[RMDB]
RNA sequence: GGGAACGACUCGAGUAGAGUCGAAAAUAUAACCUUAUCAUUAUAAUACCAAAGAGUAUGAUUAAUAUGUGAUACGUCAGUGUGGGUACAAAUAUGUACAUUAUCGUCUACGUCGUAUUCGAUACAUCCGCAUACACCCAACAGAUAUAAAAUGAUACAAGUGUAGUGCUUUCGAGCACUACACUUGAAAAGAAACAACAACAACAAC
Reactivity to 2A3 in 0.01 (KOAc 150mM, MgCl2 10mM, bicine 150mM(pH8.5), 24C), signal-to-noise 3, nucleotides 027 to 156: u090a030u020a060a040c010c000u030u060a050u030c020a000u010u150a090u150a290a070u050a040c020c030a120a250a140g050a050g040u040a030u020g050a060u130u210a240a090u090a110u180g050u050g010a020u010a090c140g030u010c110a110g010u000g000u020g190g080g000u060a030c030a040a210a100u130a070u100g020u000a070c060a100u050u000a010u050c010g020u000c000u010a010c020g300u130c020g000u050a010u000u040c000g020a010u030a040c070a010u040c030c030g040c030a000u010a010c010a060c030c010c000a000a040c030a040g050a010u010a000u020a200a120a050a060u070g020a010u050a120
Reactivity to DMS in 0.01 (KOAc 150mM, MgCl2 10mM, bicine 150mM(pH8.5), 24C), signal-to-noise 1, nucleotides 027 to 156: u010a120u000a000a300c040c060u010u000a030u000c010a010u000u000a150u000a110a060u000a060c050c010a090a050a160g000a130g000u000a010u010g000a230u000u060a040a120u000a060u020g010u000g000a090u000a060c050g020u000c050a010g000u000g010u010g020g000g050u020a180c070a090a070a080u010a060u000g000u000a090c080a080u010u000a070u000c070g010u000c030u010a060c100g010u000c140g010u000a050u010u000c040g010a120u000a000c060a020u020c100c080g010c040a050u000a110c040a080c000c050c000a080a140c060a100g010a030u000a140u000a030a080a040a030u030g040a130u020a120

Structure probing data (2A3 and DMS) for a 207-nucleotide construct.
Values cover nucleotides 27 to 156.
DMS adducts were read by reverse transcription with MarathonRT.
It was measured as part of the RMDB library OK3TST.
The reactions ran in a buffer of 150 mM KOAc, 10 mM MgCl2 and 150 mM bicine (pH 8.5), at 24 C.
For DMS, 1,451 sequencing reads were counted.